[RMDB]
RNA sequence: GGGAACGACUCGAGUAGAGUCGAAAAAGAUAUGGAGGAAGACAUGCUCAAAAACACGUCUUGGACCAAAGCUCGGAAACGAGCUUUGCUAGACGUGACAAAGAGCAACAGCUUCCUCCUAAGUCAACGUCAAGCUUAUGUUCGCAUAAGCUUGACGAAAAGAAACAACAACAACAAC
Reactivity to DMS in 0.01 (KOAc 150mM, MgCl2 10mM, bicine 150mM(pH8.5), 24C), signal-to-noise 1, nucleotides 027 to 126: a170g030a080u000a300u010g030g000a010g010g000a010a010g010a030c100a250u020g020c010u020c000a010a090a160a140a140c020a010c050g010u000c000u000u000g000g000a080c300c020a010a000a000g010c000u000c020g000g000a090a050a120c010g000a020g010c000u000u000u010g010c020u000a010g020a020c000g000u000g040a080c110a020a130a210g000a000g000c000a020a020c300a130g020c000u000u000c000c000u020c000c000u000a000a100g000u010c010a150a170

The data come from the RNA Mapping Database (RMDB), library TTRDES. An RNA of 177 nucleotides, treated with DMS and read out base by base. The RNA was probed in 150 mM KOAc, 10 mM MgCl2 and 150 mM bicine (pH 8.5) at 24 C.